[RMDB]
RNA sequence: GGGAACGACUCGAGUAGAGUCGAAAAUACGCGCUAGGGAUCGUACGAUGACUAGGUACGUAUAUCUAGCAUGCUAGCAUGCGAGUACGUGCAGCUAGCGUACGAGUCAUGAGUACGUACGCGAGUAUCACGCGAGGUAUUUCGAUACCUCGCGUGAAAAAGAAACAACAACAACAAC
Reactivity to 2A3 in 0.01 (KOAc 150mM, MgCl2 10mM, bicine 150mM(pH8.5), 24C), signal-to-noise 2, nucleotides 027 to 126: u030a010c030g050c000g000c020u080a050g000g020g150a030u080c010g000u010a020c020g040a030u070g070a050c010u030a040g210g000u030a000c010g020u040a070u010a070u200c020u070a000g000c030a020u080g010c010u000a060g040c010a050u040g040c020g080a030g100u130a050c010g000u030g010c000a030g070c030u060a010g000c020g000u000a000c000g000a020g050u040c020a070u030g020a010g120u060a030c020g040u010a010c040g000c000g020a020g030u040a020
Reactivity to DMS in 0.01 (KOAc 150mM, MgCl2 10mM, bicine 150mM(pH8.5), 24C), signal-to-noise 2, nucleotides 027 to 126: u000a020c010g010c050g000c020u000a140g000g000g010a090u000c010g020u010a020c010g000a080u000g020a100c080u000a050g010g000u000a030c050g000u020a080u000a050u010c070u000a060g000c030a030u000g010c070u020a090g010c030a040u000g010c070g010a110g010u000a050c060g030u000g000c050a050g010c030u050a020g010c030g020u030a020c000g020a060g000u000c020a020u000g010a110g020u010a020c010g040u000a040c060g000c020g000a040g000u010a060